[RMDB]
RNA sequence: GGGAACGACUCGAGUAGAGUCGAAAAGGGUUUAGCAGCGAGACGACGAUACGUACCCUUUUUUUUAAGUCGUCGAGCUGAUUUUUUUCAGCGAGGUACGAGUUUUUUUUAUUGCUGCUUUACCCAAGGGUGGUUGGUUCUUCGGGGUCGACCACCCAAAAGAAACAACAACAACAAC
Reactivity to 2A3 in 0.01 (KOAc 150mM, MgCl2 10mM, bicine 150mM(pH8.5), 24C), signal-to-noise 9, nucleotides 027 to 126: g000g000g000u010u000u010a000g000c000a000g010c010g020a030g010a050c030g000a000c010g030a040u060a140c010g020u010a010c000c000c000u010u010u010u000u000u000u030u130a020a010g010u010c010g020u010c020g000a000g000c000u000g000a010u110u090u070u030u020u040u020c000a000g000c000g040a050g020g010u010a000c020g010a050g060u050u020u010u010u010u010u090u200a130u080u090g000c000u000g000c000u000u000u000a000c000c000c010a010a020
Reactivity to DMS in 0.01 (KOAc 150mM, MgCl2 10mM, bicine 150mM(pH8.5), 24C), signal-to-noise 7, nucleotides 027 to 126: g000g000g010u000u000u000a010g010c020a010g010c010g010a080g010a110c090g000a020c020g000a060u020a080c020g010u000a010c000c010c010u000u000u000u020u040u040u050u020a020a040g010u000c020g010u000c010g010a300g010c010u000g000a000u000u000u020u010u020u010u000c000a000g000c010g000a080g010g010u000a010c010g010a210g010u000u000u000u010u010u010u010u000a100u010u010g010c010u000g000c010u000u000u000a010c010c010c010a080a090